[RMDB]
RNA sequence: GGGAACGACUCGAGUAGAGUCGAAAAGAUAUGGAGGGUGAUACACGCAACAGCUAACGUCGGAAACGACGUUAGACAUGCGUCGUAUACCCUCCUAAGUCAAACAAGCACAGUUCGCUGUGCUUGAUCAUCCUUUCGAGUUCGCUCGAAAGGAUGAAAAAGAAACAACAACAACAAC
Reactivity to 2A3 in 0.01 (KOAc 150mM, MgCl2 10mM, bicine 150mM(pH8.5), 24C), signal-to-noise 2, nucleotides 027 to 126: g020a010u040a050u170g010g010a020g000g040g030u250g300a020u000a010c010a000c010g000c020a040a080c050a250g110c000u000a000a010c000g020u020c010g080g000a080a060a000c010g000a000c010g000u000u000a000g020a010c010a020u040g000c010g000u040c000g000u000a010u000a000c010c010c000u000c000c000u000a000a000g000u010c020a010a030a060c000a020a000g010c000a000c000a020g030u110u150c270g000c180u000g000u010g000c000u020u010g000a010
Reactivity to DMS in 0.01 (KOAc 150mM, MgCl2 10mM, bicine 150mM(pH8.5), 24C), signal-to-noise 4, nucleotides 027 to 126: g000a010u000a300u010g020g000a080g010g000g020u000g020a030u000a010c010a020c020g020c020a030a070c300a220g000c000u000a000a000c030g020u000c000g010g000a090a090a270c000g000a010c000g000u000u010a000g000a020c090a180u010g000c010g000u000c250g040u000a010u000a030c000c010c000u000c010c000u000a020a090g020u010c030a110a190a300c000a000a000g000c000a000c000a010g000u000u010c300g020c020u000g010u010g000c010u000u010g000a070
This 177-nucleotide RNA was probed chemically with 2A3 and DMS. For DMS the reverse transcriptase was MarathonRT. Reactivities are rounded to 0.1 and cut off at 0 and 3.